RNA sequence: GGGAACGACUCGAGUAGAGUCGAAAAGCCUCGGAGCCAAGCGGGAGGGCUCCCGGGGCGCCGCACGGGCGCAGUGCUGCGCGAGACUCUAUGCCCGUGACAACCGUGUGAGGCCAACAUCGAAGAUGCGUACCAAGCUGCGUUUCUACCUGUGUGGGUUUAGUAUAUUGUUCGCAAUAUACUAAACAAAAGAAACAACAACAACAAC
Reactivity to DMS in 0.01 (KOAc 150mM, MgCl2 10mM, bicine 150mM(pH8.5), 24C), signal-to-noise 2, nucleotides 027 to 156: g020c000c000u000c030g010g020a070g000c010c010a060a110g050c020g060g000g010a150g030g010g010c020u000c010c000c050g090g000g020g030c010g000c040c040g030c000a040c000g020g000g000c010g000c060a070g010u010g010c070u000g000c050g090c070g000a110g010a070c020u030c060u000a140u020g010c010c010c040g040u010g000a150c020a110a160c010c040g000u040g030u000g000a120g020g020c040c030a050a070c050a060u000c050g000a150a110g010a100u000g010c010g020u000a130c030c040a090a300g020c010u010g020c010g030u000u000u000c000u000a080c020c050u010g020u000g010u000g000g030
Reactivity to 2A3 in 0.01 (KOAc 150mM, MgCl2 10mM, bicine 150mM(pH8.5), 24C), signal-to-noise 6, nucleotides 027 to 156: g010c000c000u000c000g010g000a000g000c000c010a090a040g020c060g050g040g000a060g020g020g010c000u060c080c000c010g000g010g000g000c010g010c010c030g010c000a000c010g020g010g000c020g000c030a010g020u020g080c140u070g010c060g000c030g030a070g050a060c010u000c010u050a060u140g020c020c000c010g020u030g050a090c060a070a070c040c040g050u060g060u080g130a090g030g040c040c020a060a050c020a100u130c070g050a050a020g050a070u180g010c010g010u020a060c050c060a080a050g020c030u020g010c010g010u020u150u000c040u070a080c010c010u040g020u030g000u070g070g040